[RMDB]
RNA sequence: GGGAACGACUCGAGUAGAGUCGAAAAUGUCAAUAUCCCCGGCGGCGACUGGGCCACCGUGACACAAGCUCUGCGGGAUGAGCACACUACACCAUUCGAUCUCGAGAACGAGCCCGGAUGGCGCGUCCGAUAACGCUCGAUUCGUCGAGCGUUAUCGAAAAGAAACAACAACAACAAC
Reactivity to 2A3 in 0.01 (KOAc 150mM, MgCl2 10mM, bicine 150mM(pH8.5), 24C), signal-to-noise 2, nucleotides 027 to 126: u070g000u030c020a000a090u010a140u200c010c000c020c000g010g020c030g000g000c000g120a200c210u180g000g250g020c000c000a010c000c000g060u060g000a000c010a000c020a070a060g000c000u030c060u120g030c060g070g040g020a070u040g010a030g020c030a010c010a000c040u170a040c020a030c040c010a010u020u030c000g010a040u030c020u010c010g120a170g150a300a110c060g000a010g000c000c000c030g000g010a020u010g020g000c020g010c010g050u000c020
Reactivity to DMS in 0.01 (KOAc 150mM, MgCl2 10mM, bicine 150mM(pH8.5), 24C), signal-to-noise 3, nucleotides 027 to 126: u000g000u000c050a070a050u010a170u000c010c000c020c040g040g030c030g000g030c020g000a110c180u020g010g010g000c020c020a020c000c020g000u030g010a060c050a050c130a110a110g000c010u000c010u000g010c100g040g010g020a080u000g000a070g010c040a110c130a060c120u010a110c070a110c020c000a040u000u000c020g000a030u000c040u000c010g020a210g030a150a160c030g020a080g030c050c030c020g010g000a040u010g000g010c010g000c160g000u000c110